[RMDB]
RNA sequence: GGGAACGACUCGAGUAGAGUCGAAAACGUCUUGCAGGCGGGCAACUCGUUGGAGUGGCGGGCGCUCUGGUGUGUGCCCCUAGAAGCCUCAUCGCCAGAGGGCAGCUCCUAUCUCACGCACCCGAGCCUCAAGACCACGAUUCGUCGUGGUCUUGAGAAAAGAAACAACAACAACAAC
Reactivity to DMS in 0.01 (KOAc 150mM, MgCl2 10mM, bicine 150mM(pH8.5), 24C), signal-to-noise 1, nucleotides 027 to 126: c050g020u000c080u000u000g000c080a120g030g020c070g030g000g020c040a060a060c030u000c030g010u020u030g000g000a040g000u000g000g010c080g020g000g010c050g000c010u000c030u000g000g000u000g010u000g040u000g000c030c010c060c040u020a080g000a150a230g000c030c040u000c060a050u010c040g010c020c020a060g000a030g020g000g020c030a130g000c030u000c030c020u010a060u010c020u010c030a070c050g000c110a110c020c020c010g020a150g010c090